[RMDB]
RNA sequence: GGGAACGACUCGAGUAGAGUCGAAAAAUCAGAGGGCGCUAUCAUGCAAACUAGGAUUGUCUGCUCAUGCACAGAGCCAACUACCGAUAACUAACAGUGCAUGAAGGUUAGUUAUUCCAUAUUAAUUAAAACUCGUAAUUCUUCGGAAUUACGAGAACGAUGUGGAUAACUUCGGUUAUCCACAUCGAAAAGAAACAACAACAACAAC
Reactivity to 2A3 in 0.01 (KOAc 150mM, MgCl2 10mM, bicine 150mM(pH8.5), 24C), signal-to-noise 6, nucleotides 027 to 156: a000u030c030a010g020a040g050g030g000c010g000c030u120a160u300c070a080u300g000c020a020a040a040c010u030a020g040g020a040u040u050g060u100c040u050g040c010u000c010a000u010g000c000a020c010a020g040a020g040c040c020a060a070c040u140a100c050c090g040a010u010a010a010c000u000a000a000c000a020g010u000g020c010a000u030g090a080a050g060g000u000u000a000g000u010u010a010u110u050c020c000a050u120a080u300u190a160a070u100u110a050a110a070a110c000u000c000g000u000a000a000u000u000c000u010u030c140g080g000a010a000u000u000a000c000g000a000g000a000a000
Reactivity to DMS in 0.01 (KOAc 150mM, MgCl2 10mM, bicine 150mM(pH8.5), 24C), signal-to-noise 2, nucleotides 027 to 156: a110u020c010a130g010a150g010g000g030c170g030c060u000a090u000c040a090u000g030c020a100a140a130c070u000a160g020g000a120u000u000g020u000c080u000g000c010u020c020a040u000g050c040a030c040a100g000a060g020c030c040a080a140c090u000a190c050c020g030a100u000a040a020c020u000a010a020c030a130g030u010g010c040a070u000g020a070a120g030g040u000u000a030g010u000u000a030u020u010c010c070a090u010a060u020u010a050a150u000u000a050a060a120a150c010u000c000g000u000a010a010u000u000c000u000u010c300g020g010a030a000u020u000a000c020g020a020g010a060a000